[RMDB]
RNA sequence: GGGAACGACUCGAGUAGAGUCGAAAAGAUAUGGAUUGGCGAAGAACUGAUGGUGUACACAUUAGGUUACGUUCGGAAACGAACGAACCAACGAUGUGUACACCAUCAGGGAGCCAAUCCUAAGUCACCGAACCAAAUGGUUCGCCAUUUGGUUCGGAAAAGAAACAACAACAACAAC
Reactivity to DMS in 0.01 (KOAc 150mM, MgCl2 10mM, bicine 150mM(pH8.5), 24C), signal-to-noise 1, nucleotides 027 to 126: g020a030u000a300u000g010g010a020u010u000g000g020c000g000a140a180g070a200a300c030u030g000a020u000g000g010u000g000u000a030c000a020c000a000u000u020a250g000g010u000u000a080c000g030u000u000c000g010g000a100a150a280c010g030a000a000c020g000a020a000c000c000a110a180c300g000a000u000g010u000g000u000a000c000a010c000c000a000u000c000a030g000g000g000a120g030c000c000a000a000u000c000c000u040a030a090g000u000c060a300